[RMDB]
RNA sequence: GGGAACGACUCGAGUAGAGUCGAAAAGUCGUCGGUCAGGAACUCGAGCUUCGUGAUGCCGAUCCCGUGCUCGCCGGAGAUCACGCCGUCGAGCGAGCGCGCGAGCGUCAUGAUCCGCGCGACCGCAGGCGGGGUAAUGGUUCGCCAUUACCCCGCCAAAAGAAACAACAACAACAAC
Reactivity to 2A3 in 0.01 (KOAc 150mM, MgCl2 10mM, bicine 150mM(pH8.5), 24C), signal-to-noise 2, nucleotides 027 to 126: g040u030c030g000u020c010g020g030u000c030a030g060g150a060a060c010u030c080g050a070g060c020u060u060c020g040u020g040a030u050g010c030c000g050a090u050c010c060c000g030u030g010c010u010c020g010c010c000g030g020a100g030a140u230c060a060c160g060c050c030g070u060c030g010a070g010c000g020a010g000c020g000c000g020c010g010a070g040c040g050u030c020a020u060g010a050u050c020c020g000c020g010c050g060a040c030c020g040c000a030
Reactivity to DMS in 0.01 (KOAc 150mM, MgCl2 10mM, bicine 150mM(pH8.5), 24C), signal-to-noise 1, nucleotides 027 to 126: g000u000c060g010u000c030g000g010u000c030a080g030g000a150a090c070u000c020g000a090g010c030u000u000c060g000u010g000a040u000g000c080c060g020a120u020c070c190c020g000u020g000c010u000c010g020c020c020g010g000a050g000a060u000c180a140c140g020c050c050g010u000c000g010a060g000c000g010a020g010c060g020c010g010c050g000a060g020c050g000u000c080a030u010g000a080u000c010c020g000c100g020c100g010a080c070c040g010c140a060